The record gives the reactivity of an RNA of 207 nucleotides to DMS and 2A3.
RNA sequence: GGGAACGACUCGAGUAGAGUCGAAAACCUUGAAGAGCAGUAGUCAUCCUUACUGCUAGUUCAACUUAUUGUUGAGCAACAUUGCCAAAUUGCGGGAAAGUCUUAAUGACUUCGCUACCAAGUUCAAUAGCGUACUCUGAAUGGCCGGCUUAAUACAUCGUCUCAUUAUCUUCGGAUAAUGAGACGAAAAAGAAACAACAACAACAAC
Reactivity to DMS in 0.01 (KOAc 150mM, MgCl2 10mM, bicine 150mM(pH8.5), 24C), signal-to-noise 1, nucleotides 027 to 156: c020c040u000u010g030a020a090g020a110g020c040a010g020u000a030g020u010c100a220u010c200c150u020u000a010c010u000g030c040u000a080g040u010u000c000a020a000c040u000u020a110u020u010g000u040u000g020a050g050c000a130a080c070a080u010u020g000c000c080a020a060a170u000u020g050c050g050g010g000a070a040a060g000u010c000u000u000a060a090u020g010a020c000u000u000c030g000c000u000a070c000c000a070a210g030u010u000c080a080a120u000a020g030c020g000u000a010c020u010c020u010g000a070a140u010g000g000c040c060g000g000c030u000u010a100a090u020a090c090a230
Reactivity to 2A3 in 0.01 (KOAc 150mM, MgCl2 10mM, bicine 150mM(pH8.5), 24C), signal-to-noise 2, nucleotides 027 to 156: c000c000u020u090g090a100a060g000a030g020c010a000g010u040a000g040u120c040a060u200c070c000u080u060a000c000u000g000c050u020a000g000u030u010c000a000a020c110u190u200a120u140u280g000u040u000g020a010g000c000a000a060c040a160u010u100g020c000c000a000a100a090u060u060g080c000g000g040g060a090a060a020g000u010c030u100u170a260a130u200g000a010c000u030u000c000g000c010u010a030c030c050a040a110g030u130u160c040a080a110u050a050g070c010g050u040a010c070u050c030u200g030a090a080u030g000g010c000c040g050g020c000u060u080a060a040u130a090c060a020

DMS adducts were read by reverse transcription with MarathonRT. It was measured as part of the RMDB library RSTRND. The reactions ran in a buffer of 150 mM KOAc, 10 mM MgCl2 and 150 mM bicine (pH 8.5), at 24 C. High DMS reactivity at an A or C suggests that its Watson-Crick edge is free.